[RMDB]
RNA sequence: GGGAACGACUCGAGUAGAGUCGAAAAAGCAAUCCGUUUGCUAUUGAACUCCCAGCCUGGGAGAUAUCCCUGAAGCGACUGGCUCAAGGGACGGGUCGACAAACAAAAACAACAAGCCCGAAAUCAUCAUGUGGUAUCCUUUCGAGGAUACCACAUGAAAAGAAACAACAACAACAAC
Reactivity to DMS in 0.01 (KOAc 150mM, MgCl2 10mM, bicine 150mM(pH8.5), 24C), signal-to-noise 2, nucleotides 027 to 126: a060g000c060a060a010u000c150c160g000u070u000u010g000c040u000a110u000u010g030a060a160c000u000c000c000c000a170g040c300c300u040g000g000g000a000g050a030u000a000u000c000c020c000u000g000a300a070g030c000g000a060c210u090g000g050c000u010c040a270a090g010g000g000a020c000g000g000g000u000c040g050a170c190a070a070a070c300a180a020a110a060a050c100a140a180c130a010a250g000c000c000c000g040a050a150a070u000c150a080u000
Reactivity to 2A3 in 0.01 (KOAc 150mM, MgCl2 10mM, bicine 150mM(pH8.5), 24C), signal-to-noise 3, nucleotides 027 to 126: a000g020c030a030a010u030c120c120g040u030u060u020g000c000u020a090u100u120g080a080a050c010u010c000c010c010a050g120c030c140u150g010g010g020a030g000a050u140a040u070c000c000c000u000g020a010a040g010c000g230a300c200u120g150g000c020u010c060a070a050g010g000g000a010c020g000g000g030u060c020g080a050c050a030a110a010c040a000a070a040a010a020c090a020a000c030a010a030g030c000c010c000g030a040a010a030u100c040a000u000